[RMDB]
RNA sequence: GGGAACGACUCGAGUAGAGUCGAAAACCGAGCGAAGGGUCCGCGUGGGGAGGAAACGCAACCCGAGAGUGAGAUGAACGACAAGGGGCGAAGAUCCUCGGAAGGAAUUCUCCCAAGAAGCGAAGAGGACUACUUUAUAGUUCGCUAUAAAGUAGUCAAAAGAAACAACAACAACAAC
Reactivity to 2A3 in 0.01 (KOAc 150mM, MgCl2 10mM, bicine 150mM(pH8.5), 24C), signal-to-noise 6, nucleotides 027 to 126: c000c000g000a030g020c040g050a080a030g040g010g000u070c080c070g000c010g020u070g010g030g010g010a060g010g040a070a060a000c020g000c030a020a020c000c000c010g010a010g000a000g020u160g010a060g010a070u080g040a070a030c020g040a010c040a080a120g030g000g020g000c030g050a060a030g030a090u030c000c000u010c000g010g030a020a020g020g010a010a010u040u010c010u020c000c010c000a030a030g080a050a000g040c050g030a060a030g030a050g150
Reactivity to DMS in 0.01 (KOAc 150mM, MgCl2 10mM, bicine 150mM(pH8.5), 24C), signal-to-noise 6, nucleotides 027 to 126: c010c000g010a120g010c050g020a100a080g000g000g010u010c050c060g020c040g010u000g020g000g020g010a050g000g000a030a090a100c050g020c080a130a070c090c010c000g000a080g000a130g010u010g000a110g000a100u010g010a210a120c070g000a100c100a120a130g010g010g000g000c070g000a100a050g000a090u000c010c010u000c080g000g000a080a100g000g010a040a120u000u000c040u000c010c010c010a060a120g000a090a170g000c050g000a090a100g010a160g010